[RMDB]
RNA sequence: GGGAACGACUCGAGUAGAGUCGAAAACUAGGAUCGUUCGCGAUCCUAGAAAGGCGCGGCACCGUCCGCGGAACAAACGGCAAAACAAGAAUGUCAGCAUAAAAAUCAUCAGCUUCGGCUGAUGAAAGGUAAAGUAUUCGUUCGCGAAUACUUUACCAAAAGAAACAACAACAACAAC
Reactivity to 2A3 in 0.01 (KOAc 150mM, MgCl2 10mM, bicine 150mM(pH8.5), 24C), signal-to-noise 3, nucleotides 027 to 126: c000u000a000g000g000a000u000c000g020u080u030c140g020c010g050a000u000c000c010u000a000g000a010a020a000g090g030c020g010c000g000g030c050a010c070c020g160u170c000c010g000c000g030g060a010a020c010a010a000a000c020g030g070c080a010a050a020a080c070a050a050g170a130a070u150g080u220c040a040g060c070a130u170a110a150a030a030a050u040c000a000u010c000a010g000c020u080u080c200g140g000c000u010g000a000u000g000a000a000a000
Reactivity to DMS in 0.01 (KOAc 150mM, MgCl2 10mM, bicine 150mM(pH8.5), 24C), signal-to-noise 3, nucleotides 027 to 126: c010u000a010g010g010a000u000c000g030u010u010c220g040c000g000a000u000c000c030u000a000g000a040a150a110g030g000c030g010c020g000g000c010a300c000c030g000u000c000c010g010c010g020g020a020a170c180a010a000a010c020g000g000c120a070a060a080a060c150a070a100g000a090a040u000g010u000c060a040g010c130a020u030a010a040a110a100a100u000c000a000u000c000a010g020c000u000u010c170g040g010c000u000g010a000u010g010a020a030a040